The record gives the reactivity of an RNA of 207 nucleotides to 2A3. It was measured as part of the RMDB library M2RFPK. The RNA was probed in 150 mM KOAc, 10 mM MgCl2 and 150 mM bicine (pH 8.5) at 24 C.
RNA sequence: GGGAACGACUCGAGUAGAGUCGAAAAACGCGGAGUACGCUCCGCGACAACACUUCUUUCGACCCGCUAACCGAGACCAAUGGGUCGUUAAAUUACGUCUCUAUCUUACUCACAUAACAUCGCACAAAAAACGUGGUUCGGUUCGCCGAACCACGAAGACUCUUGAGAGGUUCGCCUCUCAAGAGUCAAAAGAAACAACAACAACAAC
Reactivity to 2A3 in 0.01 (KOAc 150mM, MgCl2 10mM, bicine 150mM(pH8.5), 24C), signal-to-noise 1, nucleotides 027 to 156: a000c010g000c000g010g000a000g000u050a010c150g030c040u000c000c020g010c000g020a000c000a110a040c030a000c020u100u050c010u130u300u150c000g000a000c010c010c010g000c060u130a080a140c050c050g020a020g090a100c040c010a110a110u200g000g000g030u020c020g000u070u020a000a070a040u130u110a000c020g020u000c000u000c000u090a210u110c050u060u050a200c070u110c060a070c020a120u300a300a080c050a090u160c080g070c120a140c140a080a020a080a150a150a020c020g000u000g040g000u000u000c050g030g000u010u010c070g050c060c020g000a000a000c040c000a000c000g000a000a000